[RMDB]
RNA sequence: GGGAACGACUCGAGUAGAGUCGAAAACAGUUUUUAUAGAAAUUGAUUUUAUAAGUUCCAUUUUCAUAUUCAAGGGUGUUGAACUUGAUUGUAGUGGACUUGAUUCUAGGACACAUUGUUCCAACCCGCAUGGAUACUCCUUCGGGAGUAUCCAUGCAAAAGAAACAACAACAACAAC
Reactivity to 2A3 in 0.01 (KOAc 150mM, MgCl2 10mM, bicine 150mM(pH8.5), 24C), signal-to-noise 2, nucleotides 027 to 126: c050a000g000u010u040u060u140u170a300u150a160g070a030a140a020u020u050g030a020u020u030u050u300a300u140a070a010g110u300u030c000c000a010u060u030u060u110c030a000u000a100u180u050c020a010a010g000g000g140u130g170u300u210g180a090a020c000u000u000g000a000u010u030g010u040a000g010u010g000g000a000c030u040u050g070a060u020u000c050u030a050g000g050a030c000a000c000a180u050u190g090u190u000c050c000a050a040c030c000c070